[RMDB]
RNA sequence: GGGAACGACUCGAGUAGAGUCGAAAAUUUUGAAAAGAAAAGGGGAAUGAAAGAUGGGCACGAUCGUUUGUCAAGACUGCAAUGAAACCAUUCAGCAUUUUGAAGAUGAGAAAGUGACGAUACUUUACGUUGUGAACAGAUUCGUCUGUUCACAACGAAAAGAAACAACAACAACAAC
Reactivity to 2A3 in 0.01 (KOAc 150mM, MgCl2 10mM, bicine 150mM(pH8.5), 24C), signal-to-noise 3, nucleotides 027 to 126: u030u020u000u090g060a010a020a000a030g090a010a050a040a030g000g000g020g040a080a050u070g100a190a020a030g100a110u050g000g060g000c020a000c050g050a060u030c040g040u000u050u080g130u010c050a000a000g040a030c030u000g000c020a010a030u110g060a200a010a060c050c010a010u010u050c030a010g080c030a040u000u050u070u080g120a100a020g030a060u060g020a000g040a100a050a000g000u010g000a020c030g000a000u010a090c000u010u010u030a010
Reactivity to DMS in 0.01 (KOAc 150mM, MgCl2 10mM, bicine 150mM(pH8.5), 24C), signal-to-noise 3, nucleotides 027 to 126: u010u000u050u040g020a070a040a110a090g020a030a030a070a050g000g000g010g010a100a130u010g000a070a060a060g000a090u020g010g020g000c040a020c080g000a050u000c000g000u010u010u000g020u010c050a040a050g000a040c050u020g000c100a030a030u010g000a080a090a170c240c060a050u000u010c050a050g010c050a070u020u000u000u000g000a010a060g010a040u010g000a100g000a020a030a080g020u000g000a030c080g000a120u020a040c020u000u000u000a070

The record gives the reactivity of an RNA of 177 nucleotides to 2A3 and DMS. Conditions: 150 mM KOAc, 10 mM MgCl2 and 150 mM bicine (pH 8.5), 24 C. For 2A3 the reverse transcriptase was SuperScript II with manganese. The data come from the RNA Mapping Database (RMDB), libraries RFM100 and RFMREP.